[RMDB]
RNA sequence: GGGAACGACUCGAGUAGAGUCGAAAAUAUCAUCCGAUGUCAGCUCGAAGCGGUUCACGCGGAACGCGGUGGUGAUGUCGCUAAAUAUGUCGUUGUAGAAGUCACUGAGCUCUAUGUCGAUGACGCGCGGAGGGAGUGAAUUCGUUCACUCCCUCCGAAAAGAAACAACAACAACAAC
Reactivity to DMS in 0.01 (KOAc 150mM, MgCl2 10mM, bicine 150mM(pH8.5), 24C), signal-to-noise 2, nucleotides 027 to 126: u000a040u000c090a030u000c190c010g010a050u020g030u010c200a210g020c020u010c000g010a210a190g010c020g000g000u000u000c130a110c080g020c070g000g020a030a060c100g010c030g010g000u010g000g010u000g010a060u000g020u000c010g030c070u010a070a030a070u000a060u000g040u010c030g020u000u000g010u000a040g020a050a060g010u020c070a070c140u010g000a070g010c040u000c050u010a020u000g020u000c020g000a020u010g010a140c070g010c060g020
Reactivity to 2A3 in 0.01 (KOAc 150mM, MgCl2 10mM, bicine 150mM(pH8.5), 24C), signal-to-noise 2, nucleotides 027 to 126: u230a090u100c070a000u060c050c040g000a020u050g120u200c020a030g000c050u040c070g080a100a010g000c000g020g000u040u070c070a060c160g090c120g020g100a030a020c060g050c020g100g000u040g030g080u050g050a050u150g000u040c000g010c060u050a080a050a070u220a110u160g100u010c040g050u030u100g040u030a070g050a220a020g030u030c010a120c300u070g000a010g070c000u000c030u140a010u070g070u020c000g000a030u030g020a000c060g040c000g050